Source: RMDB library OK1LIB, as collected in RNAgym.
This 177-nucleotide RNA was probed chemically with DMS and 2A3.
For 2A3 the reverse transcriptase was SuperScript II with manganese.
The RNA was probed in 150 mM KOAc, 10 mM MgCl2 and 150 mM bicine (pH 8.5) at 24 C.
[RMDB]
RNA sequence: GGGAACGACUCGAGUAGAGUCGAAAACUUGGCAAAUAAAAUAAAAGCCGAAGCUGAACUUAAUUUGCCAUUUAAUGGCCUGCAGUUCGCCGCCAGCUGACAAAUUGAAAAUGUAAUUUAGCCAAAGCCGUAUGCUAUUAUUCGUAAUAGCAUACGGAAAAGAAACAACAACAACAAC
Reactivity to DMS in 0.01 (KOAc 150mM, MgCl2 10mM, bicine 150mM(pH8.5), 24C), signal-to-noise 4, nucleotides 027 to 126: c080u000u000g000g000c000a040a010a000u020a060a070a070a080u020a060a110a120a050g000c020c080g000a300a090g020c020u010g040a050a070c090u000u000a140a120u020u020u010g000c000c000a010u000u010u010a100a060u000g010g010c010c120u020g000c130a030g000u000u010c020g000c030c030g000c120c220a030g000c030u000g000a130c190a030a070a090u040u020g000a070a060a080a080u040g010u010a050a070u000u010u010a130g010c020c010a030a060a100g010
Reactivity to 2A3 in 0.01 (KOAc 150mM, MgCl2 10mM, bicine 150mM(pH8.5), 24C), signal-to-noise 8, nucleotides 027 to 126: c020u010u010g000g000c000a010a020a040u090a050a170a050a000u120a040a190a030a010g020c010c020g020a040a010g010c080u120g010a010a040c010u030u100a070a080u140u120u100g000c000c000a020u080u120u150a190a150u060g020g020c000c010u050g030c030a010g010u030u040c010g010c010c010g010c020c020a010g000c010u030g030a040c060a050a120a100u160u160g080a120a090a030a040u110g040u150a030a090u040u040u090a030g010c020c000a050a030a020g060
The DMS profile rests on 6,990 reads.